[RMDB]
RNA sequence: GGGAACGACUCGAGUAGAGUCGAAAAGUGUCUCAGACUGUGAGUGUCAGACACACUCUCUGACUCAGACAGUGUGAGUGAGACAGUCUGAGUCAGUCUGUGUGACUGUCAGAGUGACUGUGUCAGAAUUGAAUCGUGUUUUCGAACACGAUUCAAUAAAAGAAACAACAACAACAAC
Reactivity to 2A3 in 0.01 (KOAc 150mM, MgCl2 10mM, bicine 150mM(pH8.5), 24C), signal-to-noise 5, nucleotides 027 to 126: g070u040g090u010c010u010c040a050g030a110c040u080g040u050g210a050g090u110g060u070c010a000g030a030c000a000c000a000c030u020c000u000c000u000g000a010c000u000c010a010g020a030c010a130g070u030g010u040g170a220g100u180g040a040g040a010c010a010g000u000c000u000g000a000g000u020c000a000g010u000c000u010g050u000g000u020g010a030c000u010g010u030c010a030g030a030g160u090g030a070c030u050g030u030g040u120c030a020g070a100
Reactivity to DMS in 0.01 (KOAc 150mM, MgCl2 10mM, bicine 150mM(pH8.5), 24C), signal-to-noise 6, nucleotides 027 to 126: g020u000g010u010c020u000c030a090g010a090c030u000g010u000g010a100g020u000g010u000c010a040g010a140c030a020c020a020c030u000c040u000c000u000g000a030c010u000c000a020g000a020c020a080g040u000g010u010g010a130g000u010g000a120g010a050c010a090g010u000c000u000g010a050g000u000c010a000g010u000c030u000g010u010g030u000g010a100c020u000g000u000c020a070g000a110g010u000g010a070c030u000g010u000g000u000c040a080g000a120
The record gives the reactivity of an RNA of 177 nucleotides to 2A3 and DMS.
Conditions: 150 mM KOAc, 10 mM MgCl2 and 150 mM bicine (pH 8.5), 24 C.
For 2A3 the reverse transcriptase was SuperScript II with manganese.
For 2A3, 8,180 sequencing reads were counted.
Source: RMDB library OK2TRN, as collected in RNAgym.